[RMDB]
RNA sequence: GGGAACGACUCGAGUAGAGUCGAAAAGCAUGAGCCAACAUGCCUGGCCUGAAUCUUCAUUUUUACAAAAACAAUAGGGCAGAGGAAGCAAUCAGAUAUGCGUUUGUCUCAGGUGAGCAGAGGGAUGACUUUGAGUUCUGUCCUUUGUCCUGUACCACUCAUAUCAUAAUUUCGAUUAUGAUAUGAGAAAAGAAACAACAACAACAAC
Reactivity to DMS in 0.01 (KOAc 150mM, MgCl2 10mM, bicine 150mM(pH8.5), 24C), signal-to-noise 4, nucleotides 027 to 156: g030c030a030u000g010a070g020c110c200a120a180c020a030u010g020c010c020u010g020g000c010c000u010g020a100a110u010c060u010u000c050a110u020u010u000u000u000a210c110a070a070a030a080a090c050a130a090u000a050g020g020g000c010a050g010a050g020g010a080a140g000c080a070a080u010c020a090g030a110u000a080u000g000c100g050u000u000u010g010u000c030u010c030a090g000g010u010g010a100g020c040a080g010a030g010g020g000a140u000g000a060c070u010u010u010g010a110g020u000u000c050u020g020u000c010c000u000u010u000g000u010c000c010u000g020u000a080c050c110a150
Reactivity to 2A3 in 0.01 (KOAc 150mM, MgCl2 10mM, bicine 150mM(pH8.5), 24C), signal-to-noise 9, nucleotides 027 to 156: g010c010a010u030g020a020g110c050c030a040a070c000a110u020g000c000c010u030g050g020c010c010u060g130a150a150u090c070u220u090c140a220u100u100u100u160u210a160c120a060a140a010a070a020c050a070a120u100a120g000g010g000c010a000g000a000g020g010a040a010g040c070a030a060u120c010a030g060a080u080a050u230g090c070g040u040u080u100g090u020c010u000c030a070g030g120u160g090a050g030c050a020g040a080g050g030g020a020u050g030a040c030u070u070u080g040a060g030u120u090c030u050g170u040c000c000u000u000u010g000u000c000c000u020g030u040a070c020c050a040
Chemical mapping of a 207-nucleotide RNA with DMS and 2A3.
DMS (dimethyl sulfate) methylates the pairing face of unpaired adenines and cytosines.
The reactions ran in a buffer of 150 mM KOAc, 10 mM MgCl2 and 150 mM bicine (pH 8.5), at 24 C.
For 2A3 the reverse transcriptase was SuperScript II with manganese.
Reactivities are given for positions 27 through 156.